[RMDB]
RNA sequence: GGGAACGACUCGAGUAGAGUCGAAAAAAGAAAUCAAACAAGAUUUCUGAGACAAACACGCUUCACAAUGUGCGGCAAAGAAACAUUGUUUAUGCAAAGGCACUUCGCAAUGUGUGCUCAAACAUUGACUACCGUCCACCGUUCGCGGUGGACGGAACAGAAUGAGAUACUUCGGUAUCUCAUUCUGAAAAGAAACAACAACAACAAC
Reactivity to 2A3 in 0.01 (KOAc 150mM, MgCl2 10mM, bicine 150mM(pH8.5), 24C), signal-to-noise 5, nucleotides 027 to 156: a000a010g030a020a020a000u050c080a070a050a250c060a160a080g000a000u010u010u000c010u010g040a060g020a020c080a030a140a010c070a010c030g000c000u010u010c010a000c000a010a010u000g000u010g000c010g010g030c050a110a110a090g090a030a080a000c000a000u000u010g080u030u090u100a090u110g050c040a030a060a100g100g000c000a000c010u080u120c140g020c100a070a080u090g010u010g040u010g060c050u090c120a060a120a020c020a050u030u070g050a110c050u100a110c040c000g010u000c000c000a010c000c010g030u060u050c280g010c010g100g010u000g010g000a000c020g000g000a000a000
Reactivity to DMS in 0.01 (KOAc 150mM, MgCl2 10mM, bicine 150mM(pH8.5), 24C), signal-to-noise 2, nucleotides 027 to 156: a140a010g010a010a010a020u000c000a080a110a240c260a160a140g000a020u000u010u010c010u000g000a140g010a120c110a100a080a140c060a020c020g020c010u000u000c030a100c010a030a010u010g040u000g020c080g050g000c020a120a070a040g030a090a020a020c030a030u000u010g000u000u000u010a010u000g000c050a090a170a080g010g000c010a050c030u010u000c120g020c130a120a100u010g010u000g000u000g020c030u010c030a050a140a010c000a050u000u000g010a170c100u000a120c020c010g000u000c000c000a020c000c010g030u000u000c280g060c050g020g040u000g000g000a000c000g000g000a010a040
The data come from the RNA Mapping Database (RMDB), library M2RFPK. An RNA of 207 nucleotides, treated with 2A3 and DMS and read out base by base. The reactions ran in a buffer of 150 mM KOAc, 10 mM MgCl2 and 150 mM bicine (pH 8.5), at 24 C. Values are in units of 0.01, from 0 to 300, in steps of 10.